[RMDB]
This 177-nucleotide RNA was probed chemically with DMS and 2A3. The reactions ran in a buffer of 150 mM KOAc, 10 mM MgCl2 and 150 mM bicine (pH 8.5), at 24 C. For 2A3, 1,759 sequencing reads were counted. Values cover nucleotides 27 to 126. For DMS the reverse transcriptase was MarathonRT. 2A3 adducts were read by reverse transcription with SuperScript II with manganese. Reactivities are rounded to 0.1 and cut off at 0 and 3.
RNA sequence: GGGAACGACUCGAGUAGAGUCGAAAACACCCGCCGACCGUGACGUGCGACUGAUUCUGAGCUAACGCACGCAGGGGGAACUCGAGCCCGGUGACCAGCUCGAGCGCGGCGCCGGGCGGGUGAGAUCGGUAGGUCACUGAUUCGUCAGUGACCUACCAAAAGAAACAACAACAACAAC
Reactivity to DMS in 0.01 (KOAc 150mM, MgCl2 10mM, bicine 150mM(pH8.5), 24C), signal-to-noise 1, nucleotides 027 to 126: c030a030c000c000c030g010c010c000g000a180c050c000g000u030g000a210c030g000u000g000c000g010a240c090u000g000a160u010u070c250u050g000a220g010c040u000a050a120c000g000c010a000c000g100c020a120g000g030g000g020g000a070a040c060u050c000g040a300g010c000c000c070g060g000u000g000a100c000c030a050g010c000u020c230g000a040g070c130g040c050g020g000c020g000c100c010g000g060g000c000g000g020g070u010g040a050g000a130u020c040
Reactivity to 2A3 in 0.01 (KOAc 150mM, MgCl2 10mM, bicine 150mM(pH8.5), 24C), signal-to-noise 3, nucleotides 027 to 126: c040a030c000c010c000g010c020c050g040a150c010c000g180u080g210a300c000g000u010g030c030g050a060c060u020g070a270u300u110c020u140g050a030g040c070u090a140a050c020g000c020a000c010g000c020a000g030g010g000g010g040a050a060c000u000c030g080a020g010c000c000c000g050g020u050g000a240c020c010a020g010c000u030c100g160a100g030c020g020c050g000g000c000g010c000c000g000g000g010c020g010g000g010u050g000a070g010a130u100c050